RNA sequence: GGGAACGACUCGAGUAGAGUCGAAAAAGCAGGACCAGCCACAUAACACCUUCAGAAUGGAACCUGUGCAGUACAGCUACGAGGAUUUCGCUCGAUUGCCCACGACGGUGUUCUGGAUCAUGGGCUAUCCUAAUGCCUGCUUCGGCAGGCAUUAGGAAAAAGAAACAACAACAACAAC
Reactivity to DMS in 0.01 (KOAc 150mM, MgCl2 10mM, bicine 150mM(pH8.5), 24C), signal-to-noise 2, nucleotides 027 to 126: a050g020c000a040g000g030a050c020c010a060g000c030c110a110c100a020u020a090a060c040a050c060c000u000u000c140a110g010a140a120u000g000g010a030a100c090c020u080g020u000g000c070a110g000u040a090c150a030g040c050u000a050c010g000a010g020g010a180u050u000u030c080g020c040u010c000g030a090u010u010g020c010c010c000a110c130g000a070c020g010g000u000g030u000u000c050u000g040g000a050u020c030a070u010g000g000g080c010u000a080
Reactivity to 2A3 in 0.01 (KOAc 150mM, MgCl2 10mM, bicine 150mM(pH8.5), 24C), signal-to-noise 2, nucleotides 027 to 126: a050g010c020a000g010g020a000c000c020a010g000c020c020a030c000a040u290a050a050c000a020c000c000u030u030c010a070g030a240a120u120g000g000a000a030c000c000u000g000u020g000c050a000g060u060a100c080a020g000c040u020a010c040g010a020g110g000a190u060u100u090c030g000c030u030c010g180a200u110u190g010c000c000c000a050c060g010a000c000g030g020u110g090u130u020c010u190g070g000a070u090c000a040u090g010g000g000c020u070a050
Structure probing data (DMS and 2A3) for a 177-nucleotide construct. For DMS, 1,913 sequencing reads were counted.